[RMDB]
RNA sequence: GGGAACGACUCGAGUAGAGUCGAAAAUGUUUGCAAUCUAUUCACUUACUAUUAAACCAUAUUAUUAAGGAAUUAGUAAACUAAACGAUUGCUAUAAUAAUUAUGACAAUUUUGUUUAAUUAUUAAAGCUAGAACUUCUAUUCGUAGAAGUUCUAGCAAAAGAAACAACAACAACAAC
Reactivity to 2A3 in 0.01 (KOAc 150mM, MgCl2 10mM, bicine 150mM(pH8.5), 24C), signal-to-noise 2, nucleotides 027 to 126: u170g050u060u030u080g010c000a000a010u000c000u050a060u120u100c010a010c090u020u000a010c000u000a020u130u100a260a140a100c000c010a030u080a100u270u290a100u120u130a200a030g010g000a020a030u030u000a000g010u010a020a020a050c080u050a030a120a030c060g020a000u000u000g010c000u000a000u010a040a010u000a000a010u010u010a060u230g020a010c010a020a170u120u180u140u110g010u000u030u000a000a030u000u000a000u030u030a130a060a000
An RNA of 177 nucleotides, treated with 2A3 and read out base by base. Values are in units of 0.01, from 0 to 300, in steps of 10. The RNA was probed in 150 mM KOAc, 10 mM MgCl2 and 150 mM bicine (pH 8.5) at 24 C. The 2A3 profile rests on 670 reads. 2A3 adducts were read by reverse transcription with SuperScript II with manganese. Source: RMDB library RFM100, as collected in RNAgym.